[RMDB]
The data come from the RNA Mapping Database (RMDB), library OK1LIB. The record gives the reactivity of an RNA of 177 nucleotides to 2A3 and DMS.
RNA sequence: GGGAACGACUCGAGUAGAGUCGAAAAGAAAAGAAAAGAAGUAUGCUAGGGAAAGAAAGAAAGAAAGAAAGAACCACCACCGAAACCUAGCAUACGAAAGGUGGUGGGAAAAGAAAAAGAAAAGAAAGGGAUAACUUAAGUUCGCUUAAGUUAUCCCAAAAGAAACAACAACAACAAC
Reactivity to 2A3 in 0.01 (KOAc 150mM, MgCl2 10mM, bicine 150mM(pH8.5), 24C), signal-to-noise 1, nucleotides 027 to 126: g040a000a010a010a000g090a000a030a010a010g160a300a040g010u020a000u000g000c000u010a020g060g090g010a060a210a020g040a140a200a020g240a070a050a000g080a040a090a010g050a110a070a000g030a040a010c000c000a000c000c000a000c000c010g070a090a030a050c000c000u020a000g050c000a000u000a000c000g000a090a000a000g030g000u000g000g000u000g000g000g000a000a030a000a010g090a010a050a020a000a000g110a070a000a000a000g090a050a050a000
Reactivity to DMS in 0.01 (KOAc 150mM, MgCl2 10mM, bicine 150mM(pH8.5), 24C), signal-to-noise 2, nucleotides 027 to 126: g010a120a180a130a110g000a180a000a040a030g000a110a130g000u000a000u000g000c010u000a000g000g000g080a050a030a090g000a240a120a140g000a090a040a090g010a050a040a170g000a100a120a010g000a160a200c010c000a000c000c000a000c000c000g020a080a080a120c000c000u020a000g010c070a010u000a000c010g010a000a040a050g000g080u020g000g010u010g000g010g000a000a090a060a020g000a000a060a100a100a180g020a080a010a060a000g030a120a070a120

For DMS the reverse transcriptase was MarathonRT.